[RMDB]
Overview
Chemical mapping of a 177-nucleotide RNA with 2A3 and DMS. The reactions ran in a buffer of 150 mM KOAc, 10 mM MgCl2 and 150 mM bicine (pH 8.5), at 24 C. High 2A3 reactivity points to a flexible backbone, as in loops and unpaired stretches.
RNA sequence: GGGAACGACUCGAGUAGAGUCGAAAAUCCGCCCAGGGUGAGUCGGGACCUAAGGCGAGGCCGACAGGCGUAGUCGAUGGACAACGGGUUGAUAUUCCCGUACCCGUGUGAACGCGCCCCUGGUGAAAGUCGAAAGAAGUUUCGACUUCUUUCGACUAAAAGAAACAACAACAACAAC
Reactivity to 2A3 in 0.01 (KOAc 150mM, MgCl2 10mM, bicine 150mM(pH8.5), 24C), signal-to-noise 9, nucleotides 027 to 126: u000c010c000g010c000c000c010a010g020g020g020u140g050a080g060u040c000g010g020g120a170c000c010u080a100a060g080g010c030g030a030g020g050c000c010g050a090c130a090g040g000c010g010u030a030g020u020c010g010a030u080g020g010a030c030a060a010c060g000g000g030u030u100g090a080u070a110u200u100c000c000c000g000u040a070c000c000c000g010u040g070u070g070a120a030c020g000c010g010c050c000c010c000u000g000g000u020g000a090a030
Reactivity to DMS in 0.01 (KOAc 150mM, MgCl2 10mM, bicine 150mM(pH8.5), 24C), signal-to-noise 9, nucleotides 027 to 126: u020c000c010g000c070c000c000a030g010g010g010u020g010a090g020u020c010g010g000g010a300c030c010u010a180a190g000g000c050g010a110g000g010c000c000g000a110c300a090g010g020c010g020u010a300g010u000c000g010a150u020g000g000a120c130a130a040c000g000g000g000u010u020g010a150u030a220u030u010c010c000c010g000u000a050c020c000c020g020u020g000u020g010a120a100c050g000c050g000c060c010c000c000u010g000g010u020g010a040a100